An RNA of 207 nucleotides, treated with DMS and 2A3 and read out base by base.
Source: RMDB library OK3TST, as collected in RNAgym.
For 2A3, 2,078 sequencing reads were counted.
For DMS the reverse transcriptase was MarathonRT.
[RMDB]
RNA sequence: GGGAACGACUCGAGUAGAGUCGAAAAGCAUACGGUAGGAUUAUACAAUUACACGAAUUAGCUUACAUGCAACUACCCUACAGUAUUAAUAAUUCAGAAACUCAAAUGGCGUCAAAUUUACCCAACACGCAUCACCUAGGCUACUUUGCGCGCGUUAGAGAAGGUAAGCAUUCGUGCUUACCUUCUCAAAAGAAACAACAACAACAAC
Reactivity to DMS in 0.01 (KOAc 150mM, MgCl2 10mM, bicine 150mM(pH8.5), 24C), signal-to-noise 2, nucleotides 027 to 156: g040c080a080u000a030c040g000g100u000a030g040g020a060u010u000a100u000a160c110a080a100u020u000a070c050a060c040g010a030a080u000u000a090g010c030u010u000a130c090a140u000g020c010a040a060c070u000a100c050c000c010u000a050c010a010g030u000a020u000u000a110a100u020a100a130u000u010c050a120g000a100a040a070c010u010c020a080a080a120u000g010g010c070g010u010c040a020a020a150u010u000u010a100c020c000c030a020a090c010a040c080g000c070a050u000c020a080c020c030u000a050g030g040c020u000a010c060u000u000u000g000c010g000c000g010c040g040u000u020a130
Reactivity to 2A3 in 0.01 (KOAc 150mM, MgCl2 10mM, bicine 150mM(pH8.5), 24C), signal-to-noise 4, nucleotides 027 to 156: g010c010a010u050a110c020g030g030u020a020g030g030a040u110u080a070u150a130c120a070a120u220u120a100c110a030c120g080a050a080u130u040a040g000c020u080u120a070c040a070u130g030c020a040a040c040u120a060c000c010c010u010a010c010a010g040u030a010u100u050a070a130u040a090a020u130u030c010a020g120a140a070a070c020u000c110a060a060a150u090g070g000c010g030u040c010a030a080a130u110u140u100a090c010c010c010a040a040c010a010c030g030c000a020u070c020a050c020c000u020a050g060g010c020u110a090c020u090u080u090g020c030g010c000g010c000g070u070u100a010